[RMDB]
RNA sequence: GGGAACGACUCGAGUAGAGUCGAAAACGAAUCAUGAGAACUCUGUUUCGAAAGGAUUUGCGGUUGAGCACCUAGAAUGGGACCCGAAAGGUUGUGAACUAUGCCUGAGGAAGGCGAAGUCAGGGGAAACUCUGAUGGAGGCUUGUCGCAAUGCUGAUCAUAACAAGUGCUUCGGCACUUGUUAUGAAAAAGAAACAACAACAACAAC
Reactivity to 2A3 in 0.01 (KOAc 150mM, MgCl2 10mM, bicine 150mM(pH8.5), 24C), signal-to-noise 3, nucleotides 027 to 156: c020g040a010a040u150c060a070u260g080a030g050a110a050c110u100c070u200g030u020u020u020c060g040a190a090a050g050g020a070u060u020u090g020c010g020g000u070u220g030a010g010c000a040c020c020u020a060g190a100a080u180g000g030g040a050c000c020c060g060a060a020a020g150g030u140u130g040u130g140a080a020c030u020a060u190g000c010c010u050g000a020g000g080a030a010g000g000c010g010a030a030g020u030c030a010g000g030g020g000a020a080a030c010u010c000u020g000a000u060g000g010a010g010g010c000u000u030g020u000c010g030c000a020a030u090g060c030u030g000a060
Reactivity to DMS in 0.01 (KOAc 150mM, MgCl2 10mM, bicine 150mM(pH8.5), 24C), signal-to-noise 2, nucleotides 027 to 156: c050g000a070a020u010c050a060u000g030a280g000a040a080c050u010c150u000g010u010u020u000c010g040a170a130a090g030g000a110u000u000u010g010c030g000g000u010u000g010a060g010c000a070c050c000u000a070g030a070a170u000g030g040g030a080c020c000c020g000a100a150a120g000g000u000u000g000u010g000a150a120c080u000a150u000g010c030c020u000g020a090g070g000a130a050g000g000c020g010a110a200g000u000c000a030g010g050g030g010a230a080a260c000u000c000u010g000a030u000g050g010a170g040g020c030u000u000g000u000c040g010c040a030a100u000g000c040u000g000a200